[RMDB]
RNA sequence: GGGAACGACUCGAGUAGAGUCGAAAAUGCGGAGCUGUGGCGUCGCGUGUGAGGCGCGUGCAGGGUGAGUGUGAGUGGACGCGUGAGUGUGUGAGUGUGCGCGCUUGGAGCGUGUUAGGCGAGUGCGCAAUGCUUUGUUGUUCGCAACAAAGCAUUGAAAAGAAACAACAACAACAAC
Reactivity to 2A3 in 0.01 (KOAc 150mM, MgCl2 10mM, bicine 150mM(pH8.5), 24C), signal-to-noise 9, nucleotides 027 to 126: u140g010c030g030g030a030g010c030u030g030u070g100g010c020g030u050c010g010c030g020u060g060u070g080a080g030g020c010g000c020g030u050g000c020a040g020g030g030u090g030a080g010u070g010u030g030a050g030u080g030g020a030c020g020c020g040u070g030a050g020u090g000u030g010u020g030a080g030u080g010u040g030c010g000c000g000c020u020u060g070g030a070g020c040g000u070g080u080u050a040g020g020c020g010a020g030u060g010c020g000
Reactivity to DMS in 0.01 (KOAc 150mM, MgCl2 10mM, bicine 150mM(pH8.5), 24C), signal-to-noise 9, nucleotides 027 to 126: u010g010c040g010g010a100g010c050u000g010u010g010g010c040g020u000c040g010c050g010u010g010u020g010a110g000g010c030g010c050g030u010g010c050a080g000g000g010u010g000a070g010u010g010u010g010a100g010u010g000g000a070c060g010c070g010u010g010a090g010u000g020u000g000u010g000a080g010u010g020u010g000c020g010c030g000c020u000u000g010g010a120g010c050g010u010g000u000u010a080g010g010c030g000a050g010u010g010c040g000